Description
An RNA of 177 nucleotides, treated with 2A3 and DMS and read out base by base. The 2A3 profile rests on 26,317 reads. For DMS the reverse transcriptase was MarathonRT. Reactivities are given for positions 27 through 126. The DMS profile rests on 15,958 reads. The reactions ran in a buffer of 150 mM KOAc, 10 mM MgCl2 and 150 mM bicine (pH 8.5), at 24 C.
[RMDB]
RNA sequence: GGGAACGACUCGAGUAGAGUCGAAAAUCUGUACCGCUCCUCCAGCACUCUCUCGCCCGACGCAGCAGUCAGCGGGAGAUGCCACGGCGGCACCUACGUUCCUUGAUCUUGGAUGCGCACCCGGAGGCAUACCUAAUGCGUUCGCGCAUUAGGUAUGAAAAGAAACAACAACAACAAC
Reactivity to 2A3 in 0.01 (KOAc 150mM, MgCl2 10mM, bicine 150mM(pH8.5), 24C), signal-to-noise 9, nucleotides 027 to 126: u050c030u060g080u080a030c010c000g010c020u030c000c010u030c010c010a010g000c000a040c040u010c000u000c000u000c000g010c010c100c120g020a010c010g050c110a300g030c030a030g090u010c000a000g000c000g000g000g000a000g000a000u000g000c000c010a060c060g020g000c000g000g000c000a040c010c020u060a050c050g040u040u030c010c000u040u090g070a110u050c050u050u070g070g020a050u070g040c040g000c040a060c010c030c010g010g020a030g010g020
Reactivity to DMS in 0.01 (KOAc 150mM, MgCl2 10mM, bicine 150mM(pH8.5), 24C), signal-to-noise 6, nucleotides 027 to 126: u030c060u020g010u020a090c050c020g020c030u020c060c010u000c050c060a180g010c030a050c180u010c000u000c000u000c020g010c040c050c110g010a020c030g010c220a160g000c230a100g010u000c010a220g000c020g000g000g010a040g000a020u000g000c020c050a080c140g010g020c030g010g020c060a030c050c060u020a160c040g020u000u010c010c000u010u020g010a050u010c060u010u000g010g020a060u010g000c050g000c030a100c020c030c030g010g010a090g000g010